[RMDB]
RNA sequence: GGGAACGACUCGAGUAGAGUCGAAAAGUGGAGGCGAAAGUCACCCUCCUCGCAUCGCAAGUUCGUGCUUGCGACUUACACGAAGGGCGAGGGGUGGGCGAAAGUUGCCAUGAGACCGUAACUUUCGAUGAGGCGGGACUGUUCGCAGUCCCGCCAACUAGCUAAGUUUGUUCGCAAACUUAGCUAGAAAAGAAACAACAACAACAAC
Reactivity to 2A3 in 0.01 (KOAc 150mM, MgCl2 10mM, bicine 150mM(pH8.5), 24C), signal-to-noise 2, nucleotides 027 to 156: g110u080g030g030a020g060g030c050g040a050a060a020g050u070c050a130c020c000c000u020c000c000u000c000g020c010a010u000c000g000c000a000a010g020u190u250c150g240u300g090c020u030u030g000c000g010a010c000u080u150a060c100a010c120g140a090a080g100g030g000c000g010a000g040g010g000g030u260g030g000g000c020g010a000a000a000g020u020u030g030c000c000a030u140g050a040g030a110c050c000g010u010a010a030c000u000u030u010c010g070a090u100g080a050g050g000c010g000g000g010a000c000u020g030u050u090c240g000c030a000g000u030c030c000c000g000c000c000a000a000
Reactivity to DMS in 0.01 (KOAc 150mM, MgCl2 10mM, bicine 150mM(pH8.5), 24C), signal-to-noise 1, nucleotides 027 to 156: g050u000g010g000a060g030g020c060g020a060a050a170g010u000c000a010c010c000c000u000c000c010u000c040g060c090a130u000c000g020c000a020a050g020u000u010c300g010u000g000c030u090u010g010c010g020a010c060u000u000a170c110a160c070g010a150a090g000g000g040c010g030a010g020g000g000g040u010g020g030g010c020g000a000a040a130g010u000u000g000c050c040a150u110g010a130g010a170c080c010g010u000a060a060c020u000u020u010c010g010a130u000g000a170g010g060c030g020g050g000a000c020u010g000u000u020c280g000c020a060g010u000c000c020c070g010c010c000a000a010